[RMDB]
RNA sequence: GGGAACGACUCGAGUAGAGUCGAAAAAGUCUGCCACUGCAAGCACAUCCUCAGAUAACUGGAUAAAGGAAGAUAAUGUGGCACAGAGGAGUCUGGGGAUACUUCUAGCCAAAUAGUUUUUGUGCCAGCUGGGUACCGAUUUCGAUCGGUACCCAGCAAAAGAAACAACAACAACAAC
Reactivity to 2A3 in 0.01 (KOAc 150mM, MgCl2 10mM, bicine 150mM(pH8.5), 24C), signal-to-noise 2, nucleotides 027 to 126: a000g070u000c000u020g020c000c030a030c020u040g010c010a000a060g000c000a040c000a000u000c000c000u010c000a010g010a030u070a090a150c040u070g090g000a080u040a100a170a030g120g060a010a060g050a110u140a190a130u300g000u090g060g050c040a040c000a020g040a040g010g050a060g030u000c000u000g030g050g000g030a000u000a000c020u000u050c040u040a040g000c010c000a050a140a130u120a000g000u040u080u050u040u000g010u000g000c000c000a000